[RMDB]
Chemical mapping of a 177-nucleotide RNA with 2A3 and DMS. For DMS the reverse transcriptase was MarathonRT. 2A3 adducts were read by reverse transcription with SuperScript II with manganese.
RNA sequence: GGGAACGACUCGAGUAGAGUCGAAAAUGAAAUAGCCUGUGCAAGACGCUGAUCUUGCCAUGAUCUGGAACUUUAGUGCUGAGGUCCGAGUUCCAGGGUAUCAUGUCGGACCUUAGCACUAAUUAAACAAACAGAAAGAGUUCGCUCUUUCUGUUUGAAAAGAAACAACAACAACAAC
Reactivity to 2A3 in 0.01 (KOAc 150mM, MgCl2 10mM, bicine 150mM(pH8.5), 24C), signal-to-noise 4, nucleotides 027 to 126: u150g020a040a020a110u120a060g050c020c000u060g080u180g010c020a010a000g010a010c030g060c300u200g040a300u010c000u010u010g000c000c010a030u070g010a050u050c060u060g040g050a040a080c010u020u030u000a010g000u010g000c000u000g010a000g020g000u010c020c000g000a020g040u070u020c040c010a000g080g000g030u130a090u300c090a090u110g090u070c000g000g000a000c000c000u010u000a000g000c000a000c000u000a000a000u000u020a000a010a000
Reactivity to DMS in 0.01 (KOAc 150mM, MgCl2 10mM, bicine 150mM(pH8.5), 24C), signal-to-noise 6, nucleotides 027 to 126: u010g010a080a110a100u010a090g000c110c040u000g000u010g010c010a020a020g010a010c020g020c270u010g000a110u000c010u000u000g000c010c040a040u000g000a080u010c060u010g010g000a110a150c090u000u000u000a000g010u000g010c000u000g000a010g010g010u000c000c000g000a050g010u000u000c150c080a070g000g000g010u010a060u010c070a080u000g010u000c010g010g000a010c000c000u000u000a010g010c000a000c000u000a000a010u000u010a060a070a200